[RMDB]
RNA sequence: GGGAACGACUCGAGUAGAGUCGAAAAUGGUGUUAAGUGGAAUAAGUGGAAAAAUAUACAUAUAUGUACAGGGGGCUACAUAUAUGUAUAUGCCCCCUAUUCUCAGUAUAAGUAGGUAUAAGGUGGACCGAUUACUAGGAUUCGUCCUAGUAAUCGGAAAAGAAACAACAACAACAAC
Reactivity to 2A3 in 0.01 (KOAc 150mM, MgCl2 10mM, bicine 150mM(pH8.5), 24C), signal-to-noise 2, nucleotides 027 to 126: u120g020g030u100g020u120u090a170a110g080u100g090g030a000a030u060a210a030g020u210g060g100a070a020a010a130a000u010a000u000a000c010a000u000a000u000a030u020g000u000a000c110a120g130g050g000g000g000c040u030a000c000a000u010a000u000a010u000g000u020a000u000a000u000g000c000c000c000c000c040u010a020u010u010c030u010c010a050g070u080a050u030a250a010g070u090a030g160g050u080a140u050a200a070g030g010u050g030g060a030
Reactivity to DMS in 0.01 (KOAc 150mM, MgCl2 10mM, bicine 150mM(pH8.5), 24C), signal-to-noise 2, nucleotides 027 to 126: u010g010g020u010g020u000u020a040a100g020u030g010g010a060a040u000a030a040g020u040g000g000a010a070a030a110a020u000a000u000a000c000a000u000a020u000a010u000g000u000a030c060a220g000g020g010g020g020c200u010a050c010a000u020a030u010a000u020g000u000a000u000a010u000g010c160c020c000c010c030u030a030u000u000c020u000c090a140g010u010a080u020a030a070g020u000a030g020g000u000a030u030a040a060g000g020u010g000g000a300

Source: RMDB library OK1LIB, as collected in RNAgym. Structure probing data (2A3 and DMS) for a 177-nucleotide construct. For 2A3, 1,086 sequencing reads were counted. For 2A3 the reverse transcriptase was SuperScript II with manganese. DMS adducts were read by reverse transcription with MarathonRT. For DMS, 3,837 sequencing reads were counted.